Chemical mapping of a 177-nucleotide RNA with 2A3 and DMS. For DMS, 2,466 sequencing reads were counted. The data come from the RNA Mapping Database (RMDB), library TTRDEL. For 2A3, 4,383 sequencing reads were counted. For DMS the reverse transcriptase was MarathonRT. Conditions: 150 mM KOAc, 10 mM MgCl2 and 150 mM bicine (pH 8.5), 24 C.
RNA sequence: GGGAACGACUCGAGUAGAGUCGAAAAGAUAUGGAGACCAAUAGGCAAUGAUGUCAACUCGGAAACGAGUUGAGUUGAGCCUGAUGGUCUCCUAAGUCAAACCGAAUCAGGUUCGCCUGAUUCGGAACAAUGAACUGUCCUUCGGGACAGUUCAUUGAAAAGAAACAACAACAACAAC
Reactivity to 2A3 in 0.01 (KOAc 150mM, MgCl2 10mM, bicine 150mM(pH8.5), 24C), signal-to-noise 2, nucleotides 027 to 126: g000a000u020a010u110g000g000a000g000a010c010c020a000a050u080a050g000g010c030a120a300u170g010a010u040g090u240c000a000a000c000u000c010g010g010a010a020a040c000g000a010g000u000u010g000a000g020u050u120g020a010g030c000c000u010g000a020u010g010g000u000c000u010c000c000u000a010a000g000u000c020a040a030a100c000c000g000a000a000u010c000a000g040g070u040u100c250g110c100c000u000g000a010u010u000c000g020g000a000a010
Reactivity to DMS in 0.01 (KOAc 150mM, MgCl2 10mM, bicine 150mM(pH8.5), 24C), signal-to-noise 3, nucleotides 027 to 126: g020a050u000a150u010g000g000a010g020a020c000c000a020a080u000a000g000g020c000a300a300u020g010a010u010g000u010c000a000a010c000u000c000g010g000a010a040a070c010g010a000g010u000u000g000a040g010u010u010g000a150g010c000c000u000g010a110u000g000g020u000c000u000c000c000u000a000a050g000u000c040a100a080a210c010c000g000a010a000u000c000a000g000g000u020u020c270g020c010c010u000g000a010u000u000c000g010g000a060a080